About this RNA
Chemical mapping of a 177-nucleotide RNA with 2A3 and DMS. It was measured as part of the RMDB library M2PK50. For 2A3, 8,131 sequencing reads were counted. Values are in units of 0.01, from 0 to 300, in steps of 10. The RNA was probed in 150 mM KOAc, 10 mM MgCl2 and 150 mM bicine (pH 8.5) at 24 C. DMS adducts were read by reverse transcription with MarathonRT.
RNA sequence: GGGAACGACUCGAGUAGAGUCGAAAACCCUCACUCUUCGGAGUGAGGGAAAUCUGAUUCCCAAUAGCUGGGUAUCGGGGCUAAGACGGAUAGGCGUUGCCAAAAGAUCUGGCUUCGGCCAGAUCAACCUAAACACACUGUUCGCAGUGUGUUUAGGAAAAGAAACAACAACAACAAC
Reactivity to 2A3 in 0.01 (KOAc 150mM, MgCl2 10mM, bicine 150mM(pH8.5), 24C), signal-to-noise 4, nucleotides 027 to 126: c000c000c000u000c000a000c000u030c010u030u100c260g130g000a000g000u010g000a010g000g000g000a050a030a020u060c020u020g020a050u050u050c010c000c000a020a080u160a060g060c090u030g000g030g020u040a010u040c020g000g000g040g000c030u050a060a040g060a010c010g020g020a080u070a060g010g030c010g040u030u040g130c000c000a020a070a030a060g000a000u000c000u000g030g000c030u020u050c220g090g010c020c000a000g000a000u000c000a010a010
Reactivity to DMS in 0.01 (KOAc 150mM, MgCl2 10mM, bicine 150mM(pH8.5), 24C), signal-to-noise 4, nucleotides 027 to 126: c010c000c000u010c000a000c000u000c000u000u010c210g030g000a020g020u000g000a010g000g000g010a000a010a040u010c070u000g010a150u000u000c000c000c000a070a180u010a090g010c150u000g010g010g000u000a030u010c050g010g020g000g000c040u000a060a080g000a070c030g000g000a130u010a040g000g000c020g010u000u000g000c020c020a060a070a090a110g010a020u000c000u000g010g010c000u010u010c210g030g020c000c000a010g000a010u000c000a070a080